[RMDB]
RNA sequence: GGGAACGACUCGAGUAGAGUCGAAAAGAGACGCUGACGGAAACCCCGGGAACAAGGAAACAGGAGGAGGAUCGGUAGAAAAGAGCGAGACCUCCGAUUCGAGAGCUCCUGGACUCCUCAGCUCUGGCAUACCAUACGGGUUCGCCCGUAUGGUAUGAAAAGAAACAACAACAACAAC
Reactivity to 2A3 in 0.01 (KOAc 150mM, MgCl2 10mM, bicine 150mM(pH8.5), 24C), signal-to-noise 1, nucleotides 027 to 126: g060a000g020a010c140g000c020u010g030a010c140g010g020a060a070a030c010c090c000c000g000g000g000a030a020c040a070a000g090g020a110a080a010c060a080g000g030a030g000g010a030g030g050a050u010c010g010g040u090a030g180a070a170a060a000g110a030g080c040g010a010g070a130c000c000u000c000c000g010a020u000u020c040g030a050g010a030g090c000u040c000c000u000g000g000a000c010u000c000c000u000c000a000g010c000u000c010u000g030g000
Reactivity to DMS in 0.01 (KOAc 150mM, MgCl2 10mM, bicine 150mM(pH8.5), 24C), signal-to-noise 2, nucleotides 027 to 126: g010a050g030a030c250g020c010u010g040a010c130g000g000a030a130a070c260c230c030c000g040g050g000a010a040c050a160a170g000g010a090a070a110c140a160g010g010a240g010g010a120g050g000a300u000c000g000g000u030a160g000a110a100a080a150g010a130g020c030g000a100g000a110c030c010u010c010c010g010a090u000u000c040g000a050g000a230g010c070u000c010c010u010g010g020a160c100u010c010c000u000c000a030g010c000u000c000u000g020g020